[RMDB]
RNA sequence: GGGAACGACUCGAGUAGAGUCGAAAAAAAAGUUCUAUAUUGCAAACAAUAGAAGUUGUUUUCGUCAAUAGAACAUGUAUAAAAAUAUUCAAAGAUUCGACGAUGCAUAUUAUUUUAUCCAAAGAUAAAAUGGAAACAGGAUCAAUUGGUAUAAUAACUUGUGUAUACUGUUCGCAGUAUACACAAGAAAAGAAACAACAACAACAAC
Reactivity to DMS in 0.01 (KOAc 150mM, MgCl2 10mM, bicine 150mM(pH8.5), 24C), signal-to-noise 1, nucleotides 027 to 156: a040a020a200a180g010u010u000c000u000a030u000a120u000u000g000c030a120a030a040c020a000a000u010a080g010a190a290g000u000u010g010u000u000u000u000c100g040u000c000a090a050u000a030g000a080a050c000a050u000g010u000a090u000a000a160a120a070a050u000a060u010u000c010a160a060a220g010a120u000u000c030g000a210c060g000a190u000g010c040a130u000a100u000u000a020u010u000u000u000a010u000c000c080a180a090a230g000a040u000a000a020a020a030u000g010g000a120a060a040c010a010g000g000a040u000c010a100a130u000u000g000g030u000a030u000a010a050u000a050a270
Reactivity to 2A3 in 0.01 (KOAc 150mM, MgCl2 10mM, bicine 150mM(pH8.5), 24C), signal-to-noise 1, nucleotides 027 to 156: a030a000a000a000g060u070u030c070u060a180u070a100u040u190g030c010a000a000a050c010a000a070u070a170g130a260a110g090u050u010g000u010u040u020u090c080g070u070c000a020a060u040a050g000a010a000c050a040u050g050u040a140u130a160a080a000a000a000u060a040u010u090c010a040a020a040g000a050u030u020c020g040a050c080g050a080u040g060c020a010u010a030u170u000a000u110u030u070u060a050u090c030c010a140a030a000g000a010u040a000a000a000a020u020g040g060a000a050a050c030a040g000g000a010u010c020a010a140u090u030g080g000u070a070u020a010a130u080a110a020